[RMDB]
RNA sequence: GGGAACGACUCGAGUAGAGUCGAAAAGGGCGUUCGCGCCCCAAGGGCCCGUGCCAUUGGCUCAGCCUGCUCGGCCGACGCGCCGUAGCCGGCCGCCUCGAAGCUCCCUUCCUAACGGGCGGCGGGCUUUUGCAGACCAAUUCGUUGGUCUGCAAAAAAAAGAAACAACAACAACAAC
Reactivity to DMS in 0.01 (KOAc 150mM, MgCl2 10mM, bicine 150mM(pH8.5), 24C), signal-to-noise 4, nucleotides 027 to 126: g000g010g010c000g010u010u030c150g020c070g000c010c020c020c070a050a120g000g030g010c040c000c040g030u010g000c040c030a110u010u010g000g010c000u010c180a290g010c010c000u010g010c050u010c080g000g000c020c010g030a110c220g000c150g040c020c020g030u060a010g000c000c050g010g010c010c090g000c020c000u020c220g020a090a060g000c120u010c020c010c010u000u020c020c080u000a110a150c220g010g000g030c000g010g010c010g010g010g010c000
Reactivity to 2A3 in 0.01 (KOAc 150mM, MgCl2 10mM, bicine 150mM(pH8.5), 24C), signal-to-noise 2, nucleotides 027 to 126: g000g000g000c000g030u080u110c170g010c000g040c110c010c000c000a060a030g010g030g000c020c010c010g000u030g010c010c030a150u110u130g000g000c010u050c040a010g030c000c000u030g000c000u010c030g010g020c010c020g080a090c060g070c050g000c000c020g030u040a010g000c000c000g040g000c020c010g000c000c010u070c040g100a060a020g040c050u050c040c000c000u090u020c010c050u070a130a020c050g000g000g020c000g000g010c010g010g000g000c010